Source information
The record gives the reactivity of an RNA of 207 nucleotides to 2A3. As a SHAPE reagent, 2A3 marks flexible, mostly unpaired nucleotides at the ribose 2'-OH. Source: RMDB library OK3TST, as collected in RNAgym. Conditions: 150 mM KOAc, 10 mM MgCl2 and 150 mM bicine (pH 8.5), 24 C.
[RMDB]
RNA sequence: GGGAACGACUCGAGUAGAGUCGAAAAUCAUCAUAGUCGAUCACGGGGCAAUCCUUUCAAACUUUUCCAUGUGGCACCCCUACAGUUCGGUAAUCCGAAUGCCAUCGCCGAAUAUUUCAACACGGAAUACCGUUACAUCUUCGUCUUCAUCCAGCACUCGUUAAGGGCAUUUCGAUGCCCUUAACGAAAAAGAAACAACAACAACAAC
Reactivity to 2A3 in 0.01 (KOAc 150mM, MgCl2 10mM, bicine 150mM(pH8.5), 24C), signal-to-noise 1, nucleotides 027 to 156: u110c020a010u070c010a020u060a150g020u040c000g040a090u040c030a030c050g020g030g040g000c020a000a070u020c000c000u000u230u210c090a220a150a120c090u240u100u120u100c040c090a090u200g020u000g040g000c020a030c000c020c000c000u050a080c110a030g050u010u020c000g000g040u050a070a000u000c040c040g020a180a000u050g000c070c020a100u100c030g000c070c000g030a040a000u040a150u090u200u070c130a080a020c100a020c060g000g000a000a110u070a200c010c010g030u080u020a040c000a160u070c060u040u040c010g030u000c100u020u080c030a050u020c010c050a000g030c000a030c070